Source: RMDB library M2RFPK, as collected in RNAgym.
Chemical mapping of a 207-nucleotide RNA with DMS.
For DMS the reverse transcriptase was MarathonRT.
[RMDB]
RNA sequence: GGGAACGACUCGAGUAGAGUCGAAAACGUCCCCGUCGUACAGAAUAGUAACAUAUCUCUCCAAAUAUCUGAGCUUGGGUAUACGGGGAAACCCAACCCCUUGGGAAGAUUGGGUAUAUGGCUAAAUUACAUCGAUUGUACUUCGGUACAAUCGAAAUCUAAGAGGUUGGUUCGCCAACCUCUUAGAAAAAGAAACAACAACAACAAC
Reactivity to DMS in 0.01 (KOAc 150mM, MgCl2 10mM, bicine 150mM(pH8.5), 24C), signal-to-noise 1, nucleotides 027 to 156: c000g020u000c010c020c000c100g050u010c110g010u010a220c070a130g000a040a070u000a090g020u030a030a090c050a080u000a030u000c060u000c030u010c040c020a050a160a100u000a100u000c050u000g000a300g000c070u010u000g010g040g030u000a170u000a060c250g010g060g000g030a050a110a090c000c000c000a040a130c040c000c010c050u010u000g010g050g030a300a040g000a090u000u000g010g030g000u000a020u000a050u000g000g020c020u000a040a150a130u000u020a090c150a200u000c010g000a080u000u010g000u000a000c000u000u010c300g090g000u000a000c010a000a000u010c020g000a000a010a060
The reactions ran in a buffer of 150 mM KOAc, 10 mM MgCl2 and 150 mM bicine (pH 8.5), at 24 C.